[RMDB]
The record gives the reactivity of an RNA of 177 nucleotides to DMS and 2A3.

RNA sequence: GGGAACGACUCGAGUAGAGUCGAAAAAAUACUGCCAGUCCUCUUCACACCAAAUCUCUUGUAAAGCAACAAUGUCAUAGUCUUCAUCUGGGCAUUUAGGAUUUGCAAGAGCAUCUGCAAUUGCUCGAGUACUAAUGACCUUCGGGUCAUUAGUACUAAAAGAAACAACAACAACAAC
Reactivity to DMS in 0.01 (KOAc 150mM, MgCl2 10mM, bicine 150mM(pH8.5), 24C), signal-to-noise 2, nucleotides 027 to 126: a070a040u000a090c150u000g020c010c030a080g010u000c020c040u000c030u000u000c070a070c070a140c060c050a040a130a060u000c010u010c000u000u000g010u000a030a030a050g000c040a070a110c160a010a010u000g010u000c000a050u000a050g010u000c250u000u010c140a050u000c010u000g040g000g050c010a020u000u010u010a170g010g000a110u000u000u010g010c000a030a020g010a030g010c280a030u000c040u010g000c100a090a030u000u000g000c040u000c010g010
Reactivity to 2A3 in 0.01 (KOAc 150mM, MgCl2 10mM, bicine 150mM(pH8.5), 24C), signal-to-noise 1, nucleotides 027 to 126: a020a010u150a040c060u050g000c010c020a030g040u070c030c010u010c000u070u070c000a040c000a010c050c060a000a110a110u070c020u010c000u000u010g010u070a040a020a000g020c010a000a040c000a050a050u070g000u000c050a130u140a130g050u020c080u180u080c110a130u090c000u030g010g020g010c030a030u030u030u100a070g020g010a030u050u000u050g000c000a070a000g000a020g000c000a000u000c030u030g020c040a040a170u160u060g030c040u030c060g000

The RNA was probed in 150 mM KOAc, 10 mM MgCl2 and 150 mM bicine (pH 8.5) at 24 C.